[RMDB]
About this RNA:
Chemical mapping of a 177-nucleotide RNA with 2A3 and DMS. High 2A3 reactivity points to a flexible backbone, as in loops and unpaired stretches. The RNA was probed in 150 mM KOAc, 10 mM MgCl2 and 150 mM bicine (pH 8.5) at 24 C. For DMS, 983 sequencing reads were counted.

RNA sequence: GGGAACGACUCGAGUAGAGUCGAAAAGAACUGGUACUCGAAUAGCGUGCCAGAAGCUGUUCGGAGCAGGAACGUAUUGUCGUGAUACCAGUACGAAGUAUUACGUGAAAACUGCAGUCGAAAGACAGGGCUAUCGUUCGUUCGCGAGCGAUAGCCCAAAAGAAACAACAACAACAAC
Reactivity to 2A3 in 0.01 (KOAc 150mM, MgCl2 10mM, bicine 150mM(pH8.5), 24C), signal-to-noise 2, nucleotides 027 to 126: g000a010a010c000u010g010g000u070a000c000u000c110g010a200a270u300a300g020c040g000u000g000c010c000a010g000a000a000g000c060u070g030u210u000c010g000g000a000g020c000a000g000g120a030a000c010g030u140a080u140u240g150u000c000g020u000g010a060u050a060c020c010a030g110u170a000c080g130a040a020g000u220a040u040u020a010c000g050u010g140a030a080a050a090c020u030g000c000a090g000u000c000g000a000a030a060g020a000c140a000
Reactivity to DMS in 0.01 (KOAc 150mM, MgCl2 10mM, bicine 150mM(pH8.5), 24C), signal-to-noise 1, nucleotides 027 to 126: g000a030a120c000u000g000g060u000a030c000u000c000g050a300a100u140a150g020c270g060u000g010c050c030a000g000a090a110g000c000u060g000u040u030c050g000g050a130g000c000a000g000g000a140a060c010g000u000a140u030u100g000u000c020g000u020g050a030u030a140c300c190a180g030u000a000c110g030a060a050g000u040a020u000u040a020c010g030u000g010a080a020a080a240c000u000g000c000a040g020u000c010g000a050a030a140g000a040c060a120
For 2A3, 883 sequencing reads were counted. DMS adducts were read by reverse transcription with MarathonRT.